[RMDB]
RNA sequence: GGGAACGACUCGAGUAGAGUCGAAAAGAGCUUAAUGCGAACAAUUUGUCUAAGGUCAUGACGAAUUUGAGUUUAACUUGUUACAAAACUCAACAUAUGUUCUAUUCGUCAAAUUGUUCGCAUCAUAGAUAGUAUACAGAUUCGUUUGUGUGCUAUCAAAAGAAACAACAACAACAAC
Reactivity to DMS in 0.01 (KOAc 150mM, MgCl2 10mM, bicine 150mM(pH8.5), 24C), signal-to-noise 9, nucleotides 027 to 126: g010a110g010c070u010u010a090a020u000g000c000g010a020a010c010a010a000u000u010u030g010u020c100u030a110a120g010g010u020c110a160u020g000a030c020g010a030a020u000u000u000g000a020g010u000u000u000a070a100c180u030u020g010u030u030a140c260a080a010a020a020c000u000c000a010a010c050a120u040a090u050g000u000u000c000u010a020u010u000c030g010u000c000a050a020a020u000u000g000u000u000c010g020c000a000u000c110a060u020a080
Reactivity to 2A3 in 0.01 (KOAc 150mM, MgCl2 10mM, bicine 150mM(pH8.5), 24C), signal-to-noise 9, nucleotides 027 to 126: g090a010g020c060u120u140a050a000u020g000c000g000a000a000c000a000a000u000u000u020g020u000c020u050a030a030g060g010u050c030a030u070g080a080c100g090a110a080u040u020u020g010a010g010u000u010u030a140a120c110u110u180g110u280u210a080c090a040a070a010a010c000u010c000a000a010c020a050u170a030u090g040u070u040c030u100a300u050u040c010g000u000c000a000a000a000u000u000g000u000u000c000g000c000a000u000c000a000u010a010
Notes
The data come from the RNA Mapping Database (RMDB), library OK1LIB. Structure probing data (DMS and 2A3) for a 177-nucleotide construct. DMS adducts were read by reverse transcription with MarathonRT. Conditions: 150 mM KOAc, 10 mM MgCl2 and 150 mM bicine (pH 8.5), 24 C. 2A3 adducts were read by reverse transcription with SuperScript II with manganese.